Chemical mapping of a 177-nucleotide RNA with DMS and 2A3. 2A3 adducts were read by reverse transcription with SuperScript II with manganese. The reactions ran in a buffer of 150 mM KOAc, 10 mM MgCl2 and 150 mM bicine (pH 8.5), at 24 C. For DMS the reverse transcriptase was MarathonRT.
[RMDB]
RNA sequence: GGGAACGACUCGAGUAGAGUCGAAAAAAGAUUUCCGGCUGCAUCAAUGCCUGCGGCCAUCAUCAUGUCGGCCAUAUCGGCAUUCUGGGCGUGGAGAAGAAGGGUGAGGAGCUUUACCAGAUCACGAUACGCAGUAGUGAUUCGUCACUACUGCGUAAAAAGAAACAACAACAACAAC
Reactivity to DMS in 0.01 (KOAc 150mM, MgCl2 10mM, bicine 150mM(pH8.5), 24C), signal-to-noise 4, nucleotides 027 to 126: a080a070g000a200u000u010u000c040c030g010g010c040u000g010c040a060u000c130a060a040u010g000c040c040u000g010c080g010g020c020c000a070u010c080a080u010c260a090u010g010u000c100g020g020c010c020a090u010a080u010c150g000g010c010a050u000u000c060u000g000g000g010c040g030u010g010g010a100g000a090a050g020a050a060g010g010g010u000g010a090g010g000a110g000c050u010u010u000a080c060c040a100g000a080u000c090a070c110g000a210
Reactivity to 2A3 in 0.01 (KOAc 150mM, MgCl2 10mM, bicine 150mM(pH8.5), 24C), signal-to-noise 1, nucleotides 027 to 126: a000a000g040a000u000u000u000c010c000g060g010c020u020g010c000a040u060c020a090a080u060g030c010c010u030g030c030g000g000c010c000a020u080c010a050u040c020a040u150g090u100c100g040g080c030c020a040u080a110u150c040g000g000c010a010u050u040c010u070g020g020g020c020g030u030g050g020a060g000a120a020g060a020a040g060g000g000u030g020a030g010g000a010g030c000u030u050u000a050c000c020a010g000a090u040c070a020c110g030a030